[RMDB]
RNA sequence: GGGAACGACUCGAGUAGAGUCGAAAAGCGCGGAGGACCGACAGCCGGGCGCGCUUUCGCGAUCGCGCGGGCGGUGGUGCAUGGCCGCUCCCAGCCCGUGGCGCGAGCCGUCUGCUCCAUUGCGACACAUUGCUUUCUACUUCGGUAGAAAGCAAUGAAAAGAAACAACAACAACAAC
Reactivity to DMS in 0.01 (KOAc 150mM, MgCl2 10mM, bicine 150mM(pH8.5), 24C), signal-to-noise 2, nucleotides 027 to 126: g030c000g010c010g010g010a160g000g000a070c060c050g000a120c080a070g030c060c020g000g000g000c010g010c050g010c030u000u000u000c030g040c070g000a100u000c120g000c030g010c060g000g010g020c030g010g040u020g030g020u000g010c020a140u000g000g040c150c050g030c000u010c070c010c010a230g000c020c000c030g040u000g000g000c050g020c020g000a050g010c030c010g000u000c010u000g000c020u010c010c060a050u000u000g020c030g010a120c160a180
Reactivity to 2A3 in 0.01 (KOAc 150mM, MgCl2 10mM, bicine 150mM(pH8.5), 24C), signal-to-noise 1, nucleotides 027 to 126: g050c050g010c030g010g060a080g090g050a100c050c030g110a130c030a020g070c060c020g000g040g000c030g000c030g000c000u070u040u020c030g000c000g010a090u100c050g000c010g020c020g150g000g000c020g040g070u120g010g000u020g010c050a160u150g140g030c100c040g000c030u000c040c010c000a000g010c000c010c000g040u060g020g000c020g000c000g000a020g030c010c000g000u020c020u050g050c010u100c040c030a080u060u190g030c020g050a000c020a010